[RMDB]
RNA sequence: GGGAACGACUCGAGUAGAGUCGAAAAAAAGAUAUGGAAGUACUGGAGCUGUGAAGUGCUUGGACCUGAGCUCGGAAACGAGCUCAGCUAGCAUGGAGGCAGCGUUGAAAGUACUUCCUAAGUCAAAGAAUAAGUCUAUCUUCGGAUAGACUUAUUCAAAAGAAACAACAACAACAAC
Reactivity to 2A3 in 0.01 (KOAc 150mM, MgCl2 10mM, bicine 150mM(pH8.5), 24C), signal-to-noise 2, nucleotides 027 to 126: a000a000a000g060a040u110a030u110g000g010a000a000g010u000a000c000u010g010g040a040g010c000u010g070u140g180a050a020g010u000g020c010u090u120g040g070a100c020c020u020g000a010g010c000u010c030g010g020a060a090a030c000g000a000g000c010u010c000a000g000c000u000a000g000c000a000u000g000g040a060g300g060c000a000g000c000g000u060u020g000a000a020a000g000u000a000c000u000u000c000c010u000a030a020g030u000c050a070a070a170
Reactivity to DMS in 0.01 (KOAc 150mM, MgCl2 10mM, bicine 150mM(pH8.5), 24C), signal-to-noise 6, nucleotides 027 to 126: a070a070a090g020a040u000a300u000g000g000a040a010g010u000a010c000u000g000g000a080g020c010u000g000u000g000a300a160g000u000g010c000u000u010g020g010a140c300c020u000g000a010g020c000u000c000g000g010a110a080a120c010g010a010g000c000u000c000a000g020c040u000a020g010c000a010u010g000g010a300g010g000c000a010g020c000g010u000u020g000a100a140a020g010u000a010c000u000u000c000c000u000a010a090g000u000c030a110a130a180